Notes
The record gives the reactivity of an RNA of 177 nucleotides to 2A3 and DMS. For 2A3 the reverse transcriptase was SuperScript II with manganese. The DMS profile rests on 1,591 reads. Reactivities are rounded to 0.1 and cut off at 0 and 3. The RNA was probed in 150 mM KOAc, 10 mM MgCl2 and 150 mM bicine (pH 8.5) at 24 C. The data come from the RNA Mapping Database (RMDB), library TTRDEL.
RNA sequence: GGGAACGACUCGAGUAGAGUCGAAAAGAUAUGGACAAGAACUACAGAGGGGAACUCGAAGAACUCGGAAACGAGGGAGAGUUCCGACUCUGCUUGUCCUAAGUCAAAACGCACGUUCGCGUGCGAACGGUUUUGAUAGGUUCGCCUAUCAAAACCGAAAAGAAACAACAACAACAAC
Reactivity to 2A3 in 0.01 (KOAc 150mM, MgCl2 10mM, bicine 150mM(pH8.5), 24C), signal-to-noise 2, nucleotides 027 to 126: g020a030u070a050u210g010g000a000c000a010a010g020a140a070c110u240a070c300a020g010a020g000g020g020g000a000a000c000u020c040g140a290a020g020a060a020c000u010c010g000g040a070a010a050c030g000a010g000g000g040a050g020a000g000u000u000c000c010g010a020c000u000c000u000g040c000u000u000g000u000c000c000u020a080a000g040u000c000a050a040a080a080c040g020c000a000c000g000u050u110c300g010c020g090u000g000c010g010a040a020
Reactivity to DMS in 0.01 (KOAc 150mM, MgCl2 10mM, bicine 150mM(pH8.5), 24C), signal-to-noise 2, nucleotides 027 to 126: g000a020u000a300u000g000g000a010c000a010a010g010a040a060c060u010a300c000a010g020a010g070g010g010g000a010a010c000u020c000g030a110a160g000a100a270c000u000c000g000g010a130a100a180c010g000a020g010g000g000a080g000a020g000u000u000c010c000g000a030c010u000c010u000g000c020u000u000g000u010c000c000u000a030a100g000u000c080a050a060a120a140c010g000c020a020c000g010u000u040c150g010c050g050u000g000c010g010a030a120